Chemical mapping of a 207-nucleotide RNA with 2A3 and DMS. High 2A3 reactivity points to a flexible backbone, as in loops and unpaired stretches. The reactions ran in a buffer of 150 mM KOAc, 10 mM MgCl2 and 150 mM bicine (pH 8.5), at 24 C. For 2A3 the reverse transcriptase was SuperScript II with manganese.
RNA sequence: GGGAACGACUCGAGUAGAGUCGAAAAAGAUGGCAGGUUCACCCCGUACGGUGCGGAAGUUCGCGCUUCCGUGAAACGCGAAAAUCGGACGGUGGCUGCAAGUCGCAUCGCAAAACCGCGGCACGUGUUAACCUGGACCUCUUCGGAGGUCCAGGAACAAAUGCUAUAGUUUCGACUAUAGCAUUUGAAAAGAAACAACAACAACAAC
Reactivity to 2A3 in 0.01 (KOAc 150mM, MgCl2 10mM, bicine 150mM(pH8.5), 24C), signal-to-noise 3, nucleotides 027 to 156: a020g090a090u090g090g000c010a030g070g030u150u180c040a030c010c010c000c000g000u030a030c050g000g010u040g010c000g000g000a010a010g010u110u170c060g010c020g030c130u000u010c020c000g000u010g040a090a090a000c100g040c070g170a090a030a010a070u090c010g010g030a040c060g010g020u060g020g000c010u020g010c030a040a010g020u000c010g000c050a070u040c080g020c090a040a070a040a050c040c000g010c020g010g010c020a010c120g070u130g030u080u120a040a030c010c000u000g000g000a000c020c000u000c000u030u050c190g080g000a050g000g000u000c010c000a000g010g000a000a010
Reactivity to DMS in 0.01 (KOAc 150mM, MgCl2 10mM, bicine 150mM(pH8.5), 24C), signal-to-noise 1, nucleotides 027 to 156: a180g000a070u000g010g010c000a040g040g000u020u020c080a170c000c030c010c000g020u000a030c010g040g040u000g030c040g000g000a000a040g060u010u010c230g010c260g030c010u000u000c020c040g040u010g010a060a040a040c030g000c030g010a060a060a120a080u010c000g040g020a020c020g000g000u010g020g010c020u010g030c040a070a040g040u000c030g030c020a140u010c060g050c070a050a050a070a120c100c010g010c000g010g000c050a040c100g040u000g020u010u000a090a120c010c000u000g050g000a000c000c000u000c010u000u010c300g030g010a030g040g000u000c000c000a000g000g010a010a070